[RMDB]
RNA sequence: GGGAACGACUCGAGUAGAGUCGAAAAAAUCCAAAUUGUGAUUCAGGUCGAGAGUGAGUCUCCUCUCGUAAAUACAAGACUCAAAACAAUAGUAACUGCGAACAACAUCGUAAGCUUCAAGCGCGUAGCAGUAGCUGCGUAGAACUCUCUCAUAGAGGAAUUUAAUUAACUUCGGUUAAUUAAAUUCAAAAGAAACAACAACAACAAC
Reactivity to DMS in 0.01 (KOAc 150mM, MgCl2 10mM, bicine 150mM(pH8.5), 24C), signal-to-noise 1, nucleotides 027 to 156: a110a070u000c000c020a050a160a170u000u010g050u010g010a110u020u000c050a080g050g000u060c000g020a030g010a050g070u000g020a140g030u000c000u000c080c040u000c030u010c000g010u000a020a080a080u000a070c020a080a100g000a050c000u000c030a130a010a080a110c080a120a110u000a110g020u000a020a070c020u010g020c000g000a040a160c020a080a170c160a140u020c050g110u000a070a090g010c020u000u000c050a100a120g030c060g000c050g000u000a080g050c000a190g000u010a160g010c000u010g050c080g000u000a080g020a050a110c000u000c010u000c060u000c050a080u020a080g010a110g000
Reactivity to 2A3 in 0.01 (KOAc 150mM, MgCl2 10mM, bicine 150mM(pH8.5), 24C), signal-to-noise 5, nucleotides 027 to 156: a000a000u080c060c020a050a100a080u190u100g050u100g080a090u090u070c070a080g030g060u080c000g000a000g000a000g000u000g010a000g020u000c020u060c040c000u010c000u000c010g050u080a000a020a000u040a000c010a020a000g020a000c000u000c000a060a070a010a040c080a040a130u140a110g110u090a040a040c030u020g020c030g030a030a040c060a060a030c010a140u050c010g020u090a090a080g020c030u160u150c100a120a040g040c020g000c020g070u030a000g000c030a030g080u070a100g000c000u010g000c000g010u020a030g080a150a040c010u020c010u020c010u020c080a110u150a200g040a020g010
Chemical mapping of a 207-nucleotide RNA with DMS and 2A3. DMS adducts were read by reverse transcription with MarathonRT. For 2A3, 3,753 sequencing reads were counted. Conditions: 150 mM KOAc, 10 mM MgCl2 and 150 mM bicine (pH 8.5), 24 C. The data come from the RNA Mapping Database (RMDB), library ARCHII.